Record summary
Chemical mapping of a 177-nucleotide RNA with DMS and 2A3. For DMS the reverse transcriptase was MarathonRT. Values cover nucleotides 27 to 126. For DMS, 1,468 sequencing reads were counted. 2A3 adducts were read by reverse transcription with SuperScript II with manganese. The reactions ran in a buffer of 150 mM KOAc, 10 mM MgCl2 and 150 mM bicine (pH 8.5), at 24 C.

[RMDB]
RNA sequence: GGGAACGACUCGAGUAGAGUCGAAAAUGAUUACGGCGGAAGGAUAAUAACUCACGAAGGGAGCUUGAAGUGGUUUCCUGGCCCUCGAAAUAAGCAGCAGAGGGGACGAGCGGUAUAGAAUACCGGUCUGAUGAGUCCCAUUCGUGGGACUCAUCAGAAAAGAAACAACAACAACAAC
Reactivity to DMS in 0.01 (KOAc 150mM, MgCl2 10mM, bicine 150mM(pH8.5), 24C), signal-to-noise 2, nucleotides 027 to 126: u030g000a070u010u010a140c090g010g000c040g000g020a030a150g000g000a070u010a070a170u000a060a160c090u020c050a120c150g030a110a180g000g000g000a010g050c020u000u000g000a130a040g090u000g000g040u000u000u000c000c000u000g000g000c000c000c020u000c020g000a040a030a050u020a020a110g040c090a040g030c200a100g000a060g020g010g000g010a000c040g010a050g010c030g010g010u000a000u030a070g000a040a300u000a010c000c010g000g000u000
Reactivity to 2A3 in 0.01 (KOAc 150mM, MgCl2 10mM, bicine 150mM(pH8.5), 24C), signal-to-noise 2, nucleotides 027 to 126: u120g060a050u060u040a010c020g010g000c010g010g050a010a040g000g030a000u000a100a020u060a120a070c000u060c010a040c060g010a030a070g050g000g040a010g010c020u070u030g110a040a110g020u070g030g030u070u050u020c000c000u020g140g000c010c000c010u040c020g040a000a040a140u300a130a000g040c080a000g010c030a030g000a020g000g030g000g000a010c250g010a000g050c010g000g020u040a070u030a070g150a040a000u000a010c000c000g000g060u000